[RMDB]
RNA sequence: GGGAACGACUCGAGUAGAGUCGAAAAGGAGCUAUUGACCAAGGUGGGAUUGGAAGAGCGUGCUCAUCAUUACCCGGCAGAGCUGUCCGGUGGGCAACAGCAGCGCGUAGCUAUUGCCCGUGCUCUGCUGGGUGGCUAUGUUCGCAUAGCCACCCAGAAAAGAAACAACAACAACAAC
Reactivity to DMS in 0.01 (KOAc 150mM, MgCl2 10mM, bicine 150mM(pH8.5), 24C), signal-to-noise 5, nucleotides 027 to 126: g010g010a070g010c030u010a080u010u010g000a300c030c020a070a060g010g020u010g000g000g010a170u010u000g010g010a050a120g000a050g020c090g020u000g020c030u010c050a070u000c090a110u000u010a100c020c000c010g010g000c010a010g000a020g020c010u000g000u010c150c150g000g010u010g010g010g010c000a010a010c020a020g020c010a080g000c120g020c160g020u000a090g000c000u000a060u010u000g010c010c000c000g020u000g010c000u000c000u000g010
Reactivity to 2A3 in 0.01 (KOAc 150mM, MgCl2 10mM, bicine 150mM(pH8.5), 24C), signal-to-noise 3, nucleotides 027 to 126: g070g000a020g040c040u050a100u130u070g040a030c000c030a040a040g090g020u110g030g070g050a110u050u080g040g030a080a030g010a030g060c080g060u060g000c000u010c030a120u060c000a010u040u110a070c000c000c000g000g000c000a010g000a000g020c020u040g160u140c050c070g090g030u200g010g020g000c000a000a010c010a000g030c010a020g100c080g010c100g140u120a020g000c010u010a020u010u030g000c000c000c000g020u040g000c010u010c000u010g000

Annotation: Conditions: 150 mM KOAc, 10 mM MgCl2 and 150 mM bicine (pH 8.5), 24 C. This 177-nucleotide RNA was probed chemically with DMS and 2A3. It was measured as part of the RMDB library OK2TST.